[RMDB]
RNA sequence: GGGAACGACUCGAGUAGAGUCGAAAAGAAAGGCAGCCAGUGCAGCCCACGAAGCCACUCGAAGCAUGCUUUUGCAUGCCGCCCACGACUGAGGGCAGCUGCGGCACUGAGGGCAGCUGCCGAAAGAGGCUAUAAAUCCGUUCGCGGAUUUAUAGCCAAAAGAAACAACAACAACAAC
Reactivity to DMS in 0.01 (KOAc 150mM, MgCl2 10mM, bicine 150mM(pH8.5), 24C), signal-to-noise 1, nucleotides 027 to 126: g010a160a190a110g040g010c020a050g020c010c020a050g000u000g000c020a130g030c030c120c020a120c130g030a100a100g030c000c040a070c070u000c030g030a190a170g010c010a020u000g010c000u000u040u000u000g030c010a000u010g000c010c030g030c010c000c000a140c140g020a100c180u000g010a090g020g000g010c040a040g030c000u000g030c060g030g000c020a080c040u010g000a180g020g000g000c040a120g000c000u000g010c010c010g000a000a060a130g020a150

Conditions: 150 mM KOAc, 10 mM MgCl2 and 150 mM bicine (pH 8.5), 24 C. Structure probing data (DMS) for a 177-nucleotide construct. Values cover nucleotides 27 to 126. For DMS the reverse transcriptase was MarathonRT.